[RMDB]
RNA sequence: GGGAACGACUCGAGUAGAGUCGAAAAAUAAACCGGAAGCGACGCAGCAAGCCCGACCGGAUGGGCAACCGGAACCCGGAUCUCAACCCGGUUGGGACGCACCUGAGAGACGGGAAUGCGUAAAAAACACAUCCCUUAAGUUCGCUUAAGGGAUGUGAAAAGAAACAACAACAACAAC
Reactivity to 2A3 in 0.01 (KOAc 150mM, MgCl2 10mM, bicine 150mM(pH8.5), 24C), signal-to-noise 1, nucleotides 027 to 126: a000u070a000a040a040c020c010g020g010a130a010g100c070g090a060c050g020c050a030g000c030a080a060g070c000c000c000g000a020c010c000g000g000a010u030g040g020g000c050a060a040c000c000g000g080a130a150c010c030c050g080g070a120u010c000u000c010a050a100c010c000c010g070g000u060u080g020g010g000a000c000g010c000a030c000c000u060g020a110g020a020g030a090c080g000g020g050a040a060u080g000c000g000u040a070a060a000a000a030a000
Reactivity to DMS in 0.01 (KOAc 150mM, MgCl2 10mM, bicine 150mM(pH8.5), 24C), signal-to-noise 2, nucleotides 027 to 126: a060u020a050a040a110c020c000g020g020a280a160g010c170g010a050c090g020c040a070g010c050a180a220g010c000c010c010g040a080c000c010g000g000a050u010g010g010g010c040a040a040c010c010g000g000a110a110c030c020c000g000g040a070u000c010u010c010a150a050c120c000c010g000g020u000u010g000g000g020a060c060g010c070a100c140c030u000g020a130g010a120g010a140c090g000g000g000a060a050u010g020c020g000u010a010a040a030a110a070a110